RNA sequence: GGGAACGACUCGAGUAGAGUCGAAAAGAAAGUUCGCUUUCAACGGGGAUAUGGAUCCUACCCACCUCGCUAGGAGCGAAGAACUAGCUUCGGAAACGAAGCUAGGGAGCUCCAAAAGCGAGAGGGAUCCUAAGUCAUAUUCAUAUUUCGAUAUGAACCACUAUCUUUAAUUCGUUAAAGAUAGUGGAAAAGAAACAACAACAACAAC
Reactivity to DMS in 0.01 (KOAc 150mM, MgCl2 10mM, bicine 150mM(pH8.5), 24C), signal-to-noise 2, nucleotides 027 to 156: g020a040a000a080g030u000u020c170g040c030u010u010u000c010a070a140c110g010g000g050g000a190u010a130u010g010g040a030u000c050c000u010a070c020c010c020a300c130c000u000c010g060c000u000a300g000g020a040g000c020g010a090a110g000a140a130c000u000a030g010c020u000u000c020g000g020a130a110a300c020g010a050a020g010c010u000a000g000g000g010a270g010c010u000c000c010a020a020a040a020g000c000g020a010g000a140g000g010g030a070u020c010c020u000a050a100g000u020c010a080u000a100u010u010c020a100u000a120u000u000u010c130g020a100u000a010u000g010a050a290
Reactivity to 2A3 in 0.01 (KOAc 150mM, MgCl2 10mM, bicine 150mM(pH8.5), 24C), signal-to-noise 5, nucleotides 027 to 156: g020a000a010a010g020u060u100c130g020c100u050u010u010c050a080a070c090g100g030g000g020a030u060a070u160g010g000a000u020c010c000u080a300c010c020c000a020c010c000u000c000g000c010u030a080g010g010a000g000c040g240a160a010g000a010a000c000u000a000g000c000u000u000c000g010g020a020a040a040c010g000a010a000g000c000u000a000g000g000g000a000g000c000u000c000c000a110a160a050a000g000c000g000a000g000a000g000g000g000a000u000c000c000u000a120a010g050u050c030a050u090a060u220u050c010a010u050a080u130u220u190c190g090a030u080a000u110g010a030a030
Record summary: This 207-nucleotide RNA was probed chemically with DMS and 2A3. The RNA was probed in 150 mM KOAc, 10 mM MgCl2 and 150 mM bicine (pH 8.5) at 24 C. It was measured as part of the RMDB library RNAMAK. 2A3 adducts were read by reverse transcription with SuperScript II with manganese. For DMS the reverse transcriptase was MarathonRT.